Overview:
This 177-nucleotide RNA was probed chemically with DMS and 2A3. Values cover nucleotides 27 to 126. It was measured as part of the RMDB library TTRDEL. For 2A3 the reverse transcriptase was SuperScript II with manganese. For DMS the reverse transcriptase was MarathonRT.
[RMDB]
RNA sequence: GGGAACGACUCGAGUAGAGUCGAAAAGAUAUGGAUUCCAGGGAGAAAUAUAUCGGAAACGAUAUCUUUCAUCGAUCUGGGUCCUAAGUCAAAGCGACGUAACCUAGUUCGCUAGGUUACGUCGCAAUCUUGGCAUAGAGUUCGCUCUAUGCCAAGAAAAAGAAACAACAACAACAAC
Reactivity to DMS in 0.01 (KOAc 150mM, MgCl2 10mM, bicine 150mM(pH8.5), 24C), signal-to-noise 1, nucleotides 027 to 126: g010a010u000a280u000g010g000a020u000u000c010c000a000g030g010g000a060g000a020a020a010u000a000u010a000u000c040g010g010a080a080a110c000g000a010u000a000u000c060u000u000u000c000a210u000c160g000a050u000c000u000g010g000g000u000c000c010u010a010a130g010u000c040a060a080a170g030c000g010a010c000g010u000a000a010c000c000u010a000g000u000u000c230g020c000u010a000g000g000u020u000a000c000g000u000c000g010c010a010a010
Reactivity to 2A3 in 0.01 (KOAc 150mM, MgCl2 10mM, bicine 150mM(pH8.5), 24C), signal-to-noise 1, nucleotides 027 to 126: g020a000u060a040u050g040g000a030u300u280c010c000a000g000g000g000a060g020a010a000a000u000a000u000a000u030c010g030g000a000a050a080c000g000a000u020a000u010c030u060u000u050c130a260u300c030g030a000u040c010u010g030g010g000u000c010c000u000a070a030g000u030c040a060a150a000g070c010g000a000c060g000u000a020a000c000c000u030a000g040u070u130c300g000c200u010a000g000g000u010u000a000c000g000u000c000g010c000a010a000
Description:
For DMS, 1,440 sequencing reads were counted.